[RMDB]
An RNA of 177 nucleotides, treated with DMS and read out base by base. The RNA was probed in 150 mM KOAc, 10 mM MgCl2 and 150 mM bicine (pH 8.5) at 24 C.
RNA sequence: GGGAACGACUCGAGUAGAGUCGAAAACGUUCCACGCAGGACGCGAACAACACGAAGCCGAAGCAACUUCAGGUCGCCGCGCACGAACUGGCGCUCGAACUCCCCCUCGCUCGAGUAGGUUUCCCCGGACUCCUUUUAGGUUCGCCUAAAAGGAGUCAAAAGAAACAACAACAACAAC
Reactivity to DMS in 0.01 (KOAc 150mM, MgCl2 10mM, bicine 150mM(pH8.5), 24C), signal-to-noise 1, nucleotides 027 to 126: c050g000u000u000c000c010a110c200g000c100a080g000g000a080c000g000c020g000a040a090c150a030a080c140a080c200g060a020a050g050c010c010g050a090a100g020c050a100a050c020u000u010c030a100g050g000u000c010g010c040c010g050c030g000c100a040c040g010a050a090c040u000g020g010c020g000c040u060c000g000a090a140c090u000c020c010c010c020c020u000c010g010c000u000c050g020a070g000u000a000g000g090u000u000u000c010c040c030c300g000
Source information:
The DMS profile rests on 603 reads.